Notes
Conditions: 150 mM KOAc, 10 mM MgCl2 and 150 mM bicine (pH 8.5), 24 C. An RNA of 207 nucleotides, treated with DMS and 2A3 and read out base by base. The 2A3 profile rests on 1,757 reads. Source: RMDB library OK3TST, as collected in RNAgym. High 2A3 reactivity points to a flexible backbone, as in loops and unpaired stretches.
[RMDB]
RNA sequence: GGGAACGACUCGAGUAGAGUCGAAAAAUCAUGAGUGUGAAUCUAGCUUAGAUCUGACGUCUAAGGAAGUAACUGUGACAUGUCCUGCGUUUAGUAUACCAAGAAAUAUAUCAACAUAUGAAGGUCUAUGCUUUAGUGUUACUACAUCUAAAGAUCAACACCUCUUAAUUUUCGAAUUAAGAGGUGUAAAAGAAACAACAACAACAAC
Reactivity to DMS in 0.01 (KOAc 150mM, MgCl2 10mM, bicine 150mM(pH8.5), 24C), signal-to-noise 4, nucleotides 027 to 156: a070u010c050a090u020g010a100g020u010g030u000g010a100a130u010c040u010a160g040c050u000u000a040g010a040u000c040u000g020a210c220g030u010c030u000a060a050g030g010a060a100g030u010a040a060c050u000g000u010g020a060c030a050u000g010u000c020c000u000g030c030g040u000u010u000a070g000u000a050u000a060c020c020a120a090g010a090a080a100u000a050u000a060u000c030a040a080c110a110u000a080u010g010a070a060g010g020u000c050u000a040u000g010c030u000u000u000a060g010u000g000u000u000a080c040u010a090c060a100u010c060u000a080a050a060g010a090u010c030a140
Reactivity to 2A3 in 0.01 (KOAc 150mM, MgCl2 10mM, bicine 150mM(pH8.5), 24C), signal-to-noise 3, nucleotides 027 to 156: a000u080c040a030u060g060a010g050u060g020u050g070a090a030u020c010u060a030g050c020u050u010a020g000a020u040c090u140g080a050c060g030u010c040u060a020a000g050g040a020a030g040u060a070a030c030u050g050u070g080a000c010a030u100g040u010c000c010u010g010c000g010u010u040u120a040g020u020a040u030a100c060c010a110a060g060a050a090a000u160a010u010a020u060c060a040a070c030a060u090a060u120g070a050a020g060g000u010c030u050a060u070g030c000u000u050u070a050g000u030g030u090u060a030c030u030a010c030a020u030c010u050a070a060a020g060a040u120c010a020